[RMDB]
RNA sequence: GGGAACGACUCGAGUAGAGUCGAAAACCGAGAAGCUUCGGCUUCUCGGAAAUAAAGUGCGAAAUAAAUCAGGUAACUGAACUGCAAAGCACAAGCAGAAAAAAACCGUCUUGUUCGCAAGACGGAACAGAGGUACAAUGUUCGCAUUGUACCUCUGAAAAGAAACAACAACAACAAC
Reactivity to DMS in 0.01 (KOAc 150mM, MgCl2 10mM, bicine 150mM(pH8.5), 24C), signal-to-noise 2, nucleotides 027 to 126: c010c000g000a010g000a020a010g010c010u000u030c100g010g010c000u010u000c000u010c000g010g000a010a020a070u010a070a110a080g010u000g010c000g020a130a050a120u000a040a080a090u000c010a000g000g030u010a060a110c000u000g010a020a110c030u000g000c040a030a060a120g000c050a010c020a130a150g000c020a030g000a000a000a100a090a050a110a100c000c000g020u000c000u000u000g000u000u020c150g040c010a000a000g000a000c000g010g010a020a030
Reactivity to 2A3 in 0.01 (KOAc 150mM, MgCl2 10mM, bicine 150mM(pH8.5), 24C), signal-to-noise 3, nucleotides 027 to 126: c000c000g000a010g010a000a000g000c030u100u150c250g040g000c000u000u000c060u000c000g010g020a010a000a000u080a010a090a020g020u020g000c050g140a190a070a120u170a030a080a040u070c020a010g000g050u040a090a130c000u040g060a050a050c020u010g000c030a060a090a070g020c010a010c000a010a010g040c020a030g150a060a050a000a010a020a020a050c000c000g000u000c010u000u020g030u040u040c150g000c070a000a000g000a000c000g000g010a000a000
Description: Chemical mapping of a 177-nucleotide RNA with DMS and 2A3. The RNA was probed in 150 mM KOAc, 10 mM MgCl2 and 150 mM bicine (pH 8.5) at 24 C. It was measured as part of the RMDB library M2PK50. Reactivities are given for positions 27 through 126. For 2A3 the reverse transcriptase was SuperScript II with manganese.